[RMDB]
RNA sequence: GGGAACGACUCGAGUAGAGUCGAAAAUGGUUUUCGCUAUGCUCCACCUCAUAUCUGACUGAAAUAGAAUUUUGUUCUUCCAUGAUGUAAUUUAGUCAAAUAAGAGGAGACAAGACAUAGUGAAAACUCCAUAGAUGUUGUUCGCAACAUCUAUGGAAAAAGAAACAACAACAACAAC
Reactivity to DMS in 0.01 (KOAc 150mM, MgCl2 10mM, bicine 150mM(pH8.5), 24C), signal-to-noise 4, nucleotides 027 to 126: u030g010g000u000u000u000u000c000g000c010u000a000u000g010c140u010c050c110a130c010c010u010c000a080u000a000u010c060u010g000a030c000u000g000a000a030a070u010a100g000a080a050u020u020u010u020g000u010u020c140u020u040c250c080a050u010g000a070u010g010u010a050a070u000u000u000a020g010u000c010a000a010a010u010a020a050g000a020g010g010a150g010a100c230a090a100g000a030c000a010u000a000g000u000g000a010a000a000a010c000
Reactivity to 2A3 in 0.01 (KOAc 150mM, MgCl2 10mM, bicine 150mM(pH8.5), 24C), signal-to-noise 9, nucleotides 027 to 126: u110g030g000u000u000u000u000c000g000c000u000a000u000g010c040u040c020c020a040c010c000u000c000a030u010a010u030c010u000g000a000c000u030g050a020a060a060u160a070g130a090a070u100u110u090u180g150u120u050c040u180u050c070c040a120u230g020a060u090g100u150a070a020u030u000u010a000g000u010c000a000a030a000u020a030a020g010a000g030g020a040g060a040c100a050a010g010a010c000a000u010a000g000u000g000a000a000a000a000c000